[RMDB]
RNA sequence: GGGAACGACUCGAGUAGAGUCGAAAACAAUAUAUUGAAAUGUAAAUGUUCUUAAGUUCGGUUGAACUUGGAUAUUGUUACAAGAGUUCUAGUCUUUGAUACCAUUUUUACGCAAUUACAACCGCAACCUAGUGACUCACUUCGGUGAGUCACUAGGAAAAGAAACAACAACAACAAC
Reactivity to 2A3 in 0.01 (KOAc 150mM, MgCl2 10mM, bicine 150mM(pH8.5), 24C), signal-to-noise 2, nucleotides 027 to 126: c000a000a090u070a010u000a020u250u270g070a000a180a150u070g100u190a000a060a120u060g030u070u000c000u090u090a090a020g000u020u010c110g040g160u060u140g010a090a060c030u010u000g000g000a000u000a000u010u040g010u040u000a010c000a160a000g010a010g190u060u120c020u070a070g170u000c050u150u180u130g020a070u030a060c000c000a190u020u070u090u160u160a140c210g000c010a000a090u090u180a080c000a020a010c030c000g000c020a030a000
Reactivity to DMS in 0.01 (KOAc 150mM, MgCl2 10mM, bicine 150mM(pH8.5), 24C), signal-to-noise 1, nucleotides 027 to 126: c000a060a060u000a080u010a000u050u050g000a010a100a050u020g000u000a000a280a140u000g060u000u000c000u020u030a060a010g050u020u020c000g000g000u010u000g000a070a000c170u000u000g000g010a080u000a020u000u010g000u000u000a050c210a100a140g000a010g000u020u000c120u000a000g010u000c000u000u000u070g000a040u090a160c110c020a070u000u000u020u050u100a120c090g010c130a010a090u050u020a240c080a010a130c000c010g000c140a160a090
The record gives the reactivity of an RNA of 177 nucleotides to 2A3 and DMS. For 2A3, 668 sequencing reads were counted. Values cover nucleotides 27 to 126. For 2A3 the reverse transcriptase was SuperScript II with manganese. The DMS profile rests on 838 reads.